Background:
An RNA of 177 nucleotides, treated with 2A3 and DMS and read out base by base. For 2A3, 2,380 sequencing reads were counted. The reactions ran in a buffer of 150 mM KOAc, 10 mM MgCl2 and 150 mM bicine (pH 8.5), at 24 C. It was measured as part of the RMDB library OK1LIB.
RNA sequence: GGGAACGACUCGAGUAGAGUCGAAAACAGUGAUGGAAACAUCACUGAAAAACCGGAAACGGACAUGACGAUCGCCCGCAUGUCGGGAAACCGUAAACGGGAAAAGAGCUAGCGAAAGCUAGCUCAACACUCCGUGGAGUUUCGACUCCACGGAGUGAAAAGAAACAACAACAACAAC
Reactivity to 2A3 in 0.01 (KOAc 150mM, MgCl2 10mM, bicine 150mM(pH8.5), 24C), signal-to-noise 3, nucleotides 027 to 126: c000a000g000u010g000a000u010g000g050a040a010a030c000a000u000c000a010c020u000g000a050a000a010a010a000c000c010g010g010a090a070a020c030g020g020a040c040a080u200g100a080c050g100a090u130c130g100c020c000c000g010c120a140u200g080u130c000g010g000g050a040a090a000c000c000g000u030a080a230a070c020g030g030g010a040a070a020a050g000a010g000c000u010a000g000c020g050a060a030a010g000c000u000a000g000c000u000c000a000a000
Reactivity to DMS in 0.01 (KOAc 150mM, MgCl2 10mM, bicine 150mM(pH8.5), 24C), signal-to-noise 2, nucleotides 027 to 126: c000a000g000u000g000a010u010g000g000a210a260a220c000a010u000c000a000c000u020g000a000a000a110a050a070c130c000g000g010a100a250a040c080g000g000a110c040a070u000g010a150c130g000a100u000c230g000c030c030c050g000c150a190u010g000u010c000g020g000g000a060a050a210c150c010g010u020a000a090a140c000g020g000g000a070a090a030a090g030a020g030c000u000a000g000c000g040a030a080a240g040c020u000a010g000c000u000c000a090a060